RNA sequence: GGGAACGACUCGAGUAGAGUCGAAAACAGCUAUCGCAUUCGGUAAAUCUAAAGAAGGUGUAGAUUACCAAAGUUUAGAUAUGCAACCAGCUCAUUUAUUCUUUAUGAUUGCAGCGCCAGAAGGUGGCAGGAUGUAGUGGUUCGCCACUACAUCCUGAAAAGAAACAACAACAACAAC
Reactivity to 2A3 in 0.01 (KOAc 150mM, MgCl2 10mM, bicine 150mM(pH8.5), 24C), signal-to-noise 6, nucleotides 027 to 126: c040a020g030c020u040a000u050c030g000c060a100u080u090c040g000g020u040a100a100a180u000c010u020a040a100a120g140a150a090g130g010u110g040u050a030g020a060u030u010a020c010c010a060a040a000g030u030u030u060a070g010a030u050a050u240g010c000a010a060c010c000a030g070c030u010c050a060u040u080u160a110u150u020c040u050u090u070a150u120g040a080u070u120g000c030a020g020c010g020c050c000a070g040a300a020g120g030u040g040g020
Reactivity to DMS in 0.01 (KOAc 150mM, MgCl2 10mM, bicine 150mM(pH8.5), 24C), signal-to-noise 3, nucleotides 027 to 126: c110a070g020c010u000a050u000c100g000c110a110u000u000c150g040g000u000a030a040a090u010c000u040a060a020a140g030a120a080g010g020u030g010u000a030g000a110u020u020a030c010c000a050a160a060g000u030u020u050a090g000a030u000a050u010g000c020a060a150c070c070a080g000c140u010c060a010u000u000u030a060u020u010c040u030u050u030a040u010g020a050u020u010g010c080a080g000c130g000c020c010a070g020a080a110g020g020u010g010g000